[RMDB]
RNA sequence: GGGAACGACUCGAGUAGAGUCGAAAACCGAAUCCCUUCUCGAGGUUCGUUUACUGUAAGGUCUGCCUUAAGUAAGUGGCGUUGACGUCUGGGUCCUGCGCAAUGGGAAUUCAUGAACCAUGUCAGGUCCGGAAGGAAGCAGCAUUAAGUGAAACCUGUUUGGAAUUAGGUUCGCCUAAUUCCAAACAAAAGAAACAACAACAACAAC
Reactivity to 2A3 in 0.01 (KOAc 150mM, MgCl2 10mM, bicine 150mM(pH8.5), 24C), signal-to-noise 2, nucleotides 027 to 156: c070c010g000a030a140u070c050c000c000u050u090c040u040c000g080a050g100g080u050u050c000g000u000u000u010a140c020u040g070u190a030a030g030g010u050c020u080g090c050c000u180u020a150a070g140u050a130a030g030u180g140g000c010g060u080u060g000a000c020g020u000c000u040g010g010g070u070c000c000u020g000c050g040c090a100a180u050g000g020g040a050a040u100u170c030a010u230g060a030a030c010c000a000u000g030u060c010a000g000g010u000c000c000g010g030a000a040g030g040a090a060g000c030a000g030c010a020u160u090a090a020g020u010g060a030a020a000c010c030u000